[RMDB]
RNA sequence: GGGAACGACUCGAGUAGAGUCGAAAAGAUGGGGCAGGUGGGAAUAUACCUCGCCACCCACUUGCUCCUGAUUGAGAGAUAGACGGCGAGGGUCCGAUCAUACGAUAUAUUCCUGCUCAGCGUAUGAUCGGUUAUGAUACUUAAGACGAGCAGGAUAACCGUGCUCCAUAUUCGUAUGGAGCACGGUAAAAGAAACAACAACAACAAC
Reactivity to 2A3 in 0.01 (KOAc 150mM, MgCl2 10mM, bicine 150mM(pH8.5), 24C), signal-to-noise 1, nucleotides 027 to 156: g060a060u110g000g030g000g000c000a020g090g000u000g020g030g080a120a000u100a000u040a200c000c000u000c000g050c000c000a010c020c000c000a010c000u040u000g000c000u010c000c000u010g060a020u120u070g080a110g000a000g020a040u040a220g020a020c070g020g000c000g010a030g000g000g000u000c010c000g000a000u020c000a000u000a000c000g160a030u010a000u000a000u300u050c030c030u000g000c030u000c000a000g000c030g000u000a000u000g000a000u000c000g040g000u000u000a000u010g000a050u020a160c080u130u140a100a030g060a040c080g050a000g000c050a000g000g000a000u030a040
The data come from the RNA Mapping Database (RMDB), library OK3TST. An RNA of 207 nucleotides, treated with 2A3 and read out base by base. The RNA was probed in 150 mM KOAc, 10 mM MgCl2 and 150 mM bicine (pH 8.5) at 24 C.